Conditions: 150 mM KOAc, 10 mM MgCl2 and 150 mM bicine (pH 8.5), 24 C.
The record gives the reactivity of an RNA of 177 nucleotides to DMS and 2A3.
For DMS the reverse transcriptase was MarathonRT.
The 2A3 profile rests on 15,623 reads.
The data come from the RNA Mapping Database (RMDB), library TTRINS.
RNA sequence: GGGAACGACUCGAGUAGAGUCGAAAAGAUAUGGAGCGUGAACUACUCCCGAAACAGUCCAACAGCGAAAAGCUCGGAAACGAGCUUUUCGACAUGGACUGUGAUAGCUGGAGCACGCUCCUAAGUCGAUUUAACACUAGUUCGCUAGUGUUAAAUCAAAAGAAACAACAACAACAAC
Reactivity to DMS in 0.01 (KOAc 150mM, MgCl2 10mM, bicine 150mM(pH8.5), 24C), signal-to-noise 7, nucleotides 027 to 126: g000a030u010a150u000g000g000a010g030c010g020u000g000a070a060c060u020a300c000u000c000c010c030g010a270a160a030c000a010g000u000c000c010a090a110c230a230g000c010g000a010a010a010a000g010c000u000c000g000g000a050a030a110c000g000a010g000c000u000u000u000u000c000g000a010c040a300u020g020g000a010c000u000g010u000g000a070u010a250g010c170u000g000g000a020g000c000a010c000g010c000u000c000c000u000a000a050g000u000c040
Reactivity to 2A3 in 0.01 (KOAc 150mM, MgCl2 10mM, bicine 150mM(pH8.5), 24C), signal-to-noise 4, nucleotides 027 to 126: g020a030u050a020u140g000g000a010g000c000g020u010g020a070a030c070u220a060c000u300c000c000c000g010a120a140a010c000a000g000u020c010c030a220a040c070a280g090c010g000a020a000a000a000g000c000u010c000g010g000a020a010a020c000g000a000g000c000u000u000u000u000c010g000a000c010a110u300g000g000a000c000u000g000u010g020a080u160a030g110c260u130g000g000a000g000c000a000c000g000c000u010c000c000u000a000a000g010u010c050